This 177-nucleotide RNA was probed chemically with DMS.
RNA sequence: GGGAACGACUCGAGUAGAGUCGAAAAGAUAUGGAGUGGUGAGGGAGAUGACGGUGUCGGAAACGACACGGUCAUCGAAGAACUCACGUAACAUCUCCUAAGUCAAAGUUUGGGUUCGCCCAAACAACACUACUGACGUCUUCGGACGUCAGUAGUGAAAAGAAACAACAACAACAAC
Reactivity to DMS in 0.01 (KOAc 150mM, MgCl2 10mM, bicine 150mM(pH8.5), 24C), signal-to-noise 2, nucleotides 027 to 126: g020a040u000a300u000g000g010a000g050u010g010g000u020g000a030g000g000g020a100g010a000u000g000a040c000g010g070u000g000u000c010g000g000a070a070a160c000g000a010c010a010c000g010g010u000c010a010u000c000g000a070a080g010a170a190c010u000c000a000c000g020u010a090a100c130a030u020c010u000c010c000u000a040a120g000u000c020a090a070a140g000u000u000u000g000g000g000u000u010c220g000c000c000c000a010a000a000c000a130a200

The RNA was probed in 150 mM KOAc, 10 mM MgCl2 and 150 mM bicine (pH 8.5) at 24 C.